[RMDB]
Source: RMDB library OK1LIB, as collected in RNAgym. Chemical mapping of a 177-nucleotide RNA with 2A3 and DMS. Values cover nucleotides 27 to 126. As a SHAPE reagent, 2A3 marks flexible, mostly unpaired nucleotides at the ribose 2'-OH. For DMS, 3,381 sequencing reads were counted.
RNA sequence: GGGAACGACUCGAGUAGAGUCGAAAAACUAUUUGUUCUAUAGCAAACAAACCCGAAACACAGUAUAUAUUUGUUAUAUAUGCUUUGUGGUACACAGCUGUUAGGACGUGAGCCAUCAGGGUCCAAACGCUGAUACCAUAUUCGUAUGGUAUCAGCGAAAAGAAACAACAACAACAAC
Reactivity to 2A3 in 0.01 (KOAc 150mM, MgCl2 10mM, bicine 150mM(pH8.5), 24C), signal-to-noise 4, nucleotides 027 to 126: a000c120u130a140u110u030u140g020u010u030c070u110a100u110a020g000c050a010a020a130c010a010a130a050c010c000c030g080a050a050a000c030a000c000a010g010u000a000u000a000u010a010u040u140u140g120u300u040a010u000a000u000a000u020g000c000u010u040u090g020u060g030g050u090a020c060a000c010a070g010c000u050g060u130u060a010g010g050a000c030g080u090g020a020g030c010c010a050u080c110a090g110g000g000u000c000c030a060a050a010
Reactivity to DMS in 0.01 (KOAc 150mM, MgCl2 10mM, bicine 150mM(pH8.5), 24C), signal-to-noise 2, nucleotides 027 to 126: a100c060u000a130u010u010u020g000u000u020c080u000a080u020a030g000c030a090a070a040c080a040a060a030c020c060c070g030a140a140a020c020a020c040a020g020u030a000u000a000u000a020u000u030u060g000u020u040a070u000a000u000a000u000g010c000u010u000u030g000u020g010g000u030a070c160a140c200a070g000c050u000g030u010u010a100g000g000a010c060g010u000g000a130g000c050c070a040u030c040a050g000g000g000u000c010c050a120a080a100